RNA sequence: GGGAACGACUCGAGUAGAGUCGAAAAAUGCUGAUGCAGUCGGGACGUAUUCAACGGGCGCUGGCCUGAUAUUGUACGGGACAAUGGACGUCAGCGCUUCAGCAGCUCAUUUCCGCUUUGGCGUCGAUCUUCGGACGGGGUUCGCCCCGUUCGAAGGAAAAGAAACAACAACAACAAC
Reactivity to DMS in 0.01 (KOAc 150mM, MgCl2 10mM, bicine 150mM(pH8.5), 24C), signal-to-noise 5, nucleotides 027 to 126: a050u010g000c020u010g000a030u010g010c030a060g020u000c030g010g010g000a050c040g000u010a050u020u010c140a070a100c090g010g000g000c000g050c120u010g000g010c030c010u000g000a160u050a010u010u000g020u010a110c140g020g000g020a160c050a020a040u030g000g000a220c230g010u000c010a030g010c020g020c030u000u000c040a040g010c040a040g000c070u010c080a080u010u000u000c010c010g000c080u010u000u010g000g010c030g000u000c050g000a090
Reactivity to 2A3 in 0.01 (KOAc 150mM, MgCl2 10mM, bicine 150mM(pH8.5), 24C), signal-to-noise 4, nucleotides 027 to 126: a000u060g000c010u020g010a050u030g010c020a010g030u030c010g030g000g030a020c000g000u020a100u020u110c040a040a020c020g000g010g000c000g000c030u010g040g010c000c030u040g010a010u010a020u030u010g000u010a050c030g010g020g040a000c000a000a020u010g020g000a000c010g000u000c000a000g000c000g000c000u020u020c000a000g000c010a010g000c000u000c020a090u020u030u010c000c010g010c030u070u020u030g030g000c000g010u020c010g020a060